[RMDB]
RNA sequence: GGGAACGACUCGAGUAGAGUCGAAAAGCGUACUACCAGAAGGGAAAGUAGAGCUUGGAUUUAUAGGGUCCUAAGUCCCAAAUAGGACUUAGUCCCUAUUGUCAGCUCUAUAACACUUCUGGUAUCGCAAACUAGCUGCCCUUCGGGGCAGCUAGAAUCUCAGAUUAGACUUCGGUCUAAUCUGAGAAAAAGAAACAACAACAACAAC
Reactivity to 2A3 in 0.01 (KOAc 150mM, MgCl2 10mM, bicine 150mM(pH8.5), 24C), signal-to-noise 1, nucleotides 027 to 156: g010c020g050u080a070c020u000a000c000c000a010g030a060a000g000g040g010a090a130a180g010u010a000g000a000g000c010u060u090g170g000a010u070u300u020a010u000a020g000g010g020u110c040c040u000a000a000g010u010c000c020c030a220a290a030u300a140g000g000a000c020u000u000a000g000u000c000c000c000u000a010u020u000g000u000c000a000g000c000u000c000u040a000u030a040a030c040a010c000u000u000c000u000g000g000u000a000u010c040g000c000a080a080a000c020u000a000g000c000u010g010c000c040c090u050u140c300g030g020g000g000c100a000g030c020u000a000g000a000a020